Structure probing data (DMS and 2A3) for a 177-nucleotide construct. Reactivities are rounded to 0.1 and cut off at 0 and 3. For 2A3, 4,759 sequencing reads were counted. The RNA was probed in 150 mM KOAc, 10 mM MgCl2 and 150 mM bicine (pH 8.5) at 24 C. Reactivities are given for positions 27 through 126.

RNA sequence: GGGAACGACUCGAGUAGAGUCGAAAACGGGUGAGGGACGGGGGGAGCGCAAGUUCCUCAAGUCACGAACCUACGGUCGGGGAUUGCCCUCGGGUGGUCCUCGCCUGAACAACGACCCCCCGGCGCGGGUAUGGGUAGCAUUCGUGCUACCCAUACCAAAAGAAACAACAACAACAAC
Reactivity to DMS in 0.01 (KOAc 150mM, MgCl2 10mM, bicine 150mM(pH8.5), 24C), signal-to-noise 2, nucleotides 027 to 126: c080g030g030g030u010g000a300g000g030g020a030c000g000g030g040g010g000g000a010g010c000g040c110a050a070g000u000u000c000c020u000c000a010a010g010u010c000a030c000g000a260a030c000c000u000a170c110g000g020u000c020g030g020g010g000a030u000u000g020c030c010c010u080c300g000g040g100u000g010g000u000c000c000u000c000g000c020c000u000g000a130a050c210a120a150c130g000a300c030c010c010c000c020c000g000g030c130g000c100g020
Reactivity to 2A3 in 0.01 (KOAc 150mM, MgCl2 10mM, bicine 150mM(pH8.5), 24C), signal-to-noise 3, nucleotides 027 to 126: c080g010g010g010u020g030a080g020g010g000a010c010g020g010g010g010g000g000a020g000c020g010c050a110a050g020u010u010c000c000u000c010a010a010g020u020c010a010c060g020a040a020c010c010u030a040c040g010g030u090c030g000g010g000g000a010u000u040g010c000c020c020u050c180g050g000g000u020g000g000u000c000c000u000c000g000c010c000u010g010a040a010c050a040a040c070g070a100c020c010c010c010c000c020g070g000c090g030c080g050